Structure probing data (DMS and 2A3) for a 177-nucleotide construct.
RNA sequence: GGGAACGACUCGAGUAGAGUCGAAAAGCAGCAAUUUCGGACCCGAACGGCGGAAGACCCGCGUUGGCCCAGCUUGCACGACUUGGUCGAGCAAUGCCGGUGGCGACGGACCGGGUGGGUAGGCAGGUCACGCGUUGGUGUUCGCACCAACGCGUGAAAAAGAAACAACAACAACAAC
Reactivity to DMS in 0.01 (KOAc 150mM, MgCl2 10mM, bicine 150mM(pH8.5), 24C), signal-to-noise 1, nucleotides 027 to 126: g000c070a010g040c060a150a180u000u010u040c070g010g010a030c000c000c030g000a270a070c200g040g000c120g000g000a070a030g020a070c050c010c060g000c000g020u000u000g000g010c030c000c010a300g000c000u010u000g030c000a130c000g000a030c000u000u010g010g000u010c000g000a110g010c000a050a000u060g060c020c000g080g120u000g000g000c040g000a020c110g050g000a110c210c060g000g010g070u000g000g010g030u010a100g000g000c030a080g020g000
Reactivity to 2A3 in 0.01 (KOAc 150mM, MgCl2 10mM, bicine 150mM(pH8.5), 24C), signal-to-noise 1, nucleotides 027 to 126: g110c060a000g000c010a100a210u010u060u050c010g030g000a010c020c000c000g040a060a050c040g010g000c000g000g000a000a000g050a000c040c000c010g010c000g000u020u030g040g000c000c000c000a000g000c000u020u000g060c040a020c130g010a000c040u240u220g100g000u000c000g010a000g030c000a060a000u210g000c050c040g070g000u040g010g000c000g000a040c000g030g000a000c050c140g000g000g000u100g000g000g020u020a120g030g000c020a020g000g000
DMS adducts were read by reverse transcription with MarathonRT.
The 2A3 profile rests on 813 reads.
The reactions ran in a buffer of 150 mM KOAc, 10 mM MgCl2 and 150 mM bicine (pH 8.5), at 24 C.